[RMDB]
RNA sequence: GGGAACGACUCGAGUAGAGUCGAAAAGAACGGCUUCUGUGUGGCUGGACCCGCCCAGCAGUGGGUGCAGCCUGGUACCAGACAGCCCCACCCUGACCUAGAGCAAAUGCUCGGGGCGCUCCCCUGGCCUUAGUGAGUAAUUCGUUACUCACUAAGGAAAAGAAACAACAACAACAAC
Reactivity to DMS in 0.01 (KOAc 150mM, MgCl2 10mM, bicine 150mM(pH8.5), 24C), signal-to-noise 6, nucleotides 027 to 126: g000a100a130c300g000g000c000u000u000c010u000g020u020g020u010g000g020c000u000g020g000a030c000c010c000g020c000c040c120a160g010c240a120g020u000g020g010g010u010g000c020a020g010c000c010u020g000g020u050a090c170c010a000g000a030c210a020g000c000c020c100c060a080c040c020c020u020g000a060c050c030u000a110g010a070g010c080a130a100a080u020g000c000u000c000g010g000g010g000c020g040c020u000c000c000c000c110u000g000g010
Reactivity to 2A3 in 0.01 (KOAc 150mM, MgCl2 10mM, bicine 150mM(pH8.5), 24C), signal-to-noise 9, nucleotides 027 to 126: g050a060a020c040g000g000c000u020u010c010u020g120u030g040u050g130g010c000u000g010g100a010c000c000c000g020c000c020c010a110g040c060a060g020u020g010g020g000u060g080c000a000g000c000c010u010g010g010u070a050c030c000a000g010a020c110a020g010c000c000c000c010a070c000c000c030u060g050a080c000c030u070a070g010a020g080c050a130a160a150u200g000c010u000c000g000g000g010g000c010g000c000u010c010c000c000c020u070g080g000